[RMDB]
RNA sequence: GGGAACGACUCGAGUAGAGUCGAAAAGGAAUAUUUACAUCGCGUUGCCAACUUAUGACAGAACAUCACUGGAGAGUAAUCUGUUGCUCUUACGGUGUUUAUAGCGCGCCAUUUGACGGAUGGUUUACCAGUAAUGUUGUUUCGACAACAUUACUGGAAAAGAAACAACAACAACAAC
Reactivity to DMS in 0.01 (KOAc 150mM, MgCl2 10mM, bicine 150mM(pH8.5), 24C), signal-to-noise 6, nucleotides 027 to 126: g030g020a090a060u010a060u010u000u020a110c080a060u000c030g010c050g000u000u010g020c050c040a070a160c150u020u000a070u010g010a070c100a090g010a050a060c100a050u020c020a040c110u010g000g000a030g000a020g030u000a030a060u030c240u030g010u000u000g010c020u000c010u000u000a100c040g010g010u000g000u000u010u010a060u010a130g010c070g000c060g000c030c030a040u010u010u020g020a130c080g000g010a040u010g000g010u000u010u020a120
Reactivity to 2A3 in 0.01 (KOAc 150mM, MgCl2 10mM, bicine 150mM(pH8.5), 24C), signal-to-noise 9, nucleotides 027 to 126: g090g010a090a060u100a090u120u130u090a110c080a080u070c040g000c020g060u030u110g050c020c020a070a070c080u160u130a070u250g070a040c030a050g060a100a040c030a060u060c010a010c040u050g020g010a010g000a000g020u030a030a090u090c080u140g280u110u060g020c000u000c000u010u110a160c010g000g010u010g000u020u060u030a100u040a020g020c040g000c000g010c030c010a070u050u050u120g100a060c050g050g010a020u020g030g030u040u060u080a070

Chemical mapping of a 177-nucleotide RNA with DMS and 2A3. Source: RMDB libraries RFM100 and RFMREP, as collected in RNAgym. In probing experiments dimethyl sulfate is read out at A N1 and C N3, which are open when not base-paired. For 2A3 the reverse transcriptase was SuperScript II with manganese.